RNA sequence: GGGAACGACUCGAGUAGAGUCGAAAAGAUAUGGAGACUACGAUCUCAACAGCUAAUUUCGGAAACGAAAUUAGACAUGAGGCGUAAGUCUCCUAAGUCAAAAGUGUCUAAGUUCGCUUAGACACAAGCAGAAUACUACGUUCGCGUAGUAUUCUGCAAAAGAAACAACAACAACAAC
Reactivity to DMS in 0.01 (KOAc 150mM, MgCl2 10mM, bicine 150mM(pH8.5), 24C), signal-to-noise 2, nucleotides 027 to 126: g010a030u000a300u020g000g000a040g010a010c000u010a010c010g010a230u010c010u000c000a060a100c280a190g000c000u000a000a000u000u000u000c000g000g000a060a070a090c010g030a000a010a020u000u000a000g000a050c060a240u020g010a040g000g010c000g010u000a040a070g020u000c000u010c000c000u000a010a100g000u010c030a070a110a150a090g010u000g000u000c000u000a000a010g000u000u030c300g000c050u000u000a000g000a020c000a000c000a020a050
Reactivity to 2A3 in 0.01 (KOAc 150mM, MgCl2 10mM, bicine 150mM(pH8.5), 24C), signal-to-noise 2, nucleotides 027 to 126: g020a000u030a000u140g000g020a020g010a000c010u030a000c030g290a300u100c030u000c130a090a140c080a040g040c000u000a010a010u000u000u000c020g020g000a050a060a040c020g020a020a000a000u010u000a000g020a000c030a160u300g050a030g000g000c000g040u050a050a050g000u000c000u020c000c000u020a000a000g010u020c030a000a070a130a160g020u010g010u000c010u030a000a020g010u070u090c270g170c190u020u010a000g010a000c000a000c000a000a000